[RMDB]
RNA sequence: GGGAACGACUCGAGUAGAGUCGAAAACGGUCAAAGCGACUCAUUGUUAACACUUCUUAACAGCUCUCCUAACAGCGUAACUAACAACUGUUUUCGUCCUUAAACCAACGAUAACGGCUGUUAGGCCGCCAUACAGGCUUUUCGAAGCCUGUAUGGCAAAAGAAACAACAACAACAAC
Reactivity to 2A3 in 0.01 (KOAc 150mM, MgCl2 10mM, bicine 150mM(pH8.5), 24C), signal-to-noise 9, nucleotides 027 to 126: c030g010g020u030c040a130a100a110g080c040g040a030c010u020c070a120u050u140g040u060u050a050a020c050a030c180u190u120c020u070u070a040a020c010a040g020c010u010c010u020c050c010u040a070a030c030a030g080c030g090u080a080a070c030u050a030a030c050a030a010c020u080g000u000u010u000u000c010g000u030c030c010u110u210a110a090a060c050c030a020a010c010g000a010u020a030a000c010g010g000c000u000g000u000u000a000g000g000c010c010
Reactivity to DMS in 0.01 (KOAc 150mM, MgCl2 10mM, bicine 150mM(pH8.5), 24C), signal-to-noise 4, nucleotides 027 to 126: c120g000g000u000c020a070a100a110g020c110g000a060c020u000c100a140u010u000g000u000u020a030a060c170a080c160u000u000c030u010u010a030a050c030a080g020c080u000c060u010c010c030u000a060a100c150a090g000c070g020u000a090a130c030u000a010a000c020a010a040c000u000g010u000u000u000u000c010g000u000c170c100u010u040a050a070a090c300c300a100a020c000g010a000u010a010a010c020g010g010c020u000g010u000u010a010g010g000c200c120
Conditions: 150 mM KOAc, 10 mM MgCl2 and 150 mM bicine (pH 8.5), 24 C.
Structure probing data (2A3 and DMS) for a 177-nucleotide construct.
It was measured as part of the RMDB libraries RFM100 and RFMREP.
2A3 adducts were read by reverse transcription with SuperScript II with manganese.